Structure probing data (2A3 and DMS) for a 177-nucleotide construct.
Source: RMDB library M2PK50, as collected in RNAgym.
DMS adducts were read by reverse transcription with MarathonRT.
The reactions ran in a buffer of 150 mM KOAc, 10 mM MgCl2 and 150 mM bicine (pH 8.5), at 24 C.
RNA sequence: GGGAACGACUCGAGUAGAGUCGAAAACACUUGGAGUUCGCUCCAAGUGAAACGAUUGCCGAUUGGCAAUAAUACCGCAGGCGGUAAAGCGGAACAAAUAAGAAAGCGAAGACUUCGGUCUUCGCAACUUCUAAUCAGGGUUCGCCCUGAUUAGAAGAAAAGAAACAACAACAACAAC
Reactivity to 2A3 in 0.01 (KOAc 150mM, MgCl2 10mM, bicine 150mM(pH8.5), 24C), signal-to-noise 5, nucleotides 027 to 126: c010a000c000u000u000g000g000a000g020u050u070c120g100c110u000c000c000a000a000g000u000g000a020a010a000c040g040a020u000u020g010c000c030g300a300u130u300g010g010c000a010a000u090a040a050u070a050c000c000g000c020a020g150g070c080g090g050u120a090a060a000g020c020g020g000a060a050c050a070a120a050u260a130a090g180a170a080a010g000c010g000a000a000g000a000c010u030u100c280g060g000u000c000u000u000c000g000c000a000a000
Reactivity to DMS in 0.01 (KOAc 150mM, MgCl2 10mM, bicine 150mM(pH8.5), 24C), signal-to-noise 3, nucleotides 027 to 126: c000a010c000u000u000g000g010a020g030u000u020c230g020c000u010c000c000a010a010g020u000g000a030a080a100c150g000a120u010u000g010c000c000g000a160u010u010g010g000c010a000a000u000a050a100u010a130c020c010g000c030a100g020g000c100g010g000u000a020a110a080g020c010g000g000a150a110c090a040a080a080u020a090a110g000a100a110a140g000c010g020a000a010g000a010c000u000u000c190g020g010u000c000u000u000c010g020c020a020a020